[RMDB]
RNA sequence: GGGAACGACUCGAGUAGAGUCGAAAAUGAAAUAAAGCGUACGAAGAACCACGUACGCAUACAGAAAAGCGGACCUACGAGCGCACAGCGCUCAGGUAUGAGCGCAAAACAUAGGAAUUGAAAAAAACAAAUCAUCGAUGUUCGCAUCGAUGAUUUGAAAAGAAACAACAACAACAAC
Reactivity to 2A3 in 0.01 (KOAc 150mM, MgCl2 10mM, bicine 150mM(pH8.5), 24C), signal-to-noise 1, nucleotides 027 to 126: u100g000a020a000a060u200a100a160a000g050c000g000u000a000c000g070a210a140g110a160a040c000c000a020c060g000u000a020c000g000c030a000u010a010c050a020g110a000a080a000a050g000c010g000g060a010c000c000u030a060c050g040a010g100c050g000c020a110c040a180g000c010g040c010u000c000a000g000g020u100a080u160g040a030g000c040g000c000a000a050a060a000c050a030u140a020g070g090a080a100u170u210g110a010a000a030a010a010a000a010
Reactivity to DMS in 0.01 (KOAc 150mM, MgCl2 10mM, bicine 150mM(pH8.5), 24C), signal-to-noise 1, nucleotides 027 to 126: u000g000a140a090a060u010a040a090a120g000c000g010u000a000c000g000a140a070g000a170a100c180c070a100c000g000u000a000c000g050c000a070u020a080c200a110g000a060a000a130a090g000c010g010g010a050c000c000u000a040c150g020a020g000c030g000c050a100c230a110g010c010g020c000u000c000a060g010g000u010a010u010g010a060g030c030g000c040a070a010a110a010c070a040u010a040g000g000a130a170u000u000g020a000a000a010a100a000a040a140
Record summary: Structure probing data (2A3 and DMS) for a 177-nucleotide construct. For 2A3, 958 sequencing reads were counted. It was measured as part of the RMDB library M2PK90.